The data come from the RNA Mapping Database (RMDB), library 15KLIB. Chemical mapping of a 170-nucleotide RNA with 2A3 and DMS. Values cover nucleotides 27 to 129. For DMS the reverse transcriptase was MarathonRT. The RNA was probed in 150 mM KOAc, 10 mM MgCl2 and 150 mM bicine (pH 8.5) at 24 C. 2A3 adducts were read by reverse transcription with SuperScript II with manganese.
RNA sequence: GGGAACGACUCGAGUAGAGUCGAAAAAUUGCACAUUUGGUGCUCCAGAUGAUGCCUCUCGGUUACUUCAUACCGUGCUUGCAAAGGCUGAGUUAUGCUGUUCUGCACGCAUGGUUUGGAGAGAGUGAACGCGAUUGGUUCGCCAAUCGCAAAAGAAACAACAACAACAAC
Reactivity to 2A3 in 0.01 (KOAc 150mM, MgCl2 10mM, bicine 150mM(pH8.5), 24C), signal-to-noise 7, nucleotides 027 to 129: a000u150u160g000c000a000c010a020u030u020u040g070g000u190g060c050u050c020c000a010g000a040u050g040a100u050g020c000c000u010c000u010c010g100g000u120u130a050c000u000u000c000a000u000a040c000c000g010u000g010c010u000u010g000c000a010a030a060g000g000c010u050g060a140g260u170u160a120u230g010c000u010g140u180u090c070u020g000c000a000c010g000c000a000u000g000g000u030u000u000g000g000a010g000a000g000a000g000u070g040a060a020c040
Reactivity to DMS in 0.01 (KOAc 150mM, MgCl2 10mM, bicine 150mM(pH8.5), 24C), signal-to-noise 3, nucleotides 027 to 129: a060u030u040g010c020a000c030a000u010u020u020g000g010u040g040c240u040c000c000a000g000a030u030g020a090u030g030c000c140u020c010u010c000g010g050u040u060a110c040u000u030c000a000u030a010c000c000g000u000g000c000u030u000g030c020a030a080a260g010g030c030u000g040a190g060u000u060a020u060g030c050u040g020u080u050c140u000g040c000a000c070g030c010a010u020g000g000u000u000u000g000g000a030g020a110g020a030g030u050g020a080a060c130